Chemical mapping of a 177-nucleotide RNA with DMS and 2A3.

[RMDB]
RNA sequence: GGGAACGACUCGAGUAGAGUCGAAAAUAUGAGCGGCACACCAAAUACUGCCCAGCGUGCCAGAAGGCAGUGAGGAGGCUGGAUCAGGCACUGGCUGCCCUGUUGGCGGCAGGUGGGCUGGCAGCUGCCGCACCGUGUGCUUCGGCACACGGUGCGGAAAAGAAACAACAACAACAAC
Reactivity to DMS in 0.01 (KOAc 150mM, MgCl2 10mM, bicine 150mM(pH8.5), 24C), signal-to-noise 2, nucleotides 027 to 126: u000a100u010g010a100g020c030g030g000c030a040c060a200c030c050a060a130a110u000a070c080u000g000c020c000c030a060g000c070g010u000g000c010c000a120g040a050a070g010g020c050a010g000u000g000a060g000g010a170g010g010c020u000g000g030a150u000c150a090g010g010c030a040c020u000g020g020c020u000g000c020c020c090u000g000u010u010g000g010c000g000g040c060a120g000g000u020g000g020g010c020u000g000g000c040a080g010c080u000g000
Reactivity to 2A3 in 0.01 (KOAc 150mM, MgCl2 10mM, bicine 150mM(pH8.5), 24C), signal-to-noise 1, nucleotides 027 to 126: u300a110u060g080a030g040c030g030g000c020a040c020a000c040c020a010a090a040u200a100c040u050g030c000c000c000a020g040c040g050u070g040c060c000a030g060a030a060g020g000c020a020g020u080g050a040g040g010a060g060g020c020u040g050g080a200u200c090a090g080g000c020a000c050u030g070g020c020u040g000c000c000c000u220g100u210u150g020g000c000g040g020c020a000g050g010u050g000g060g000c030u000g040g000c010a020g040c000u050g040

The data come from the RNA Mapping Database (RMDB), library OK2TST. For 2A3, 1,298 sequencing reads were counted. The RNA was probed in 150 mM KOAc, 10 mM MgCl2 and 150 mM bicine (pH 8.5) at 24 C.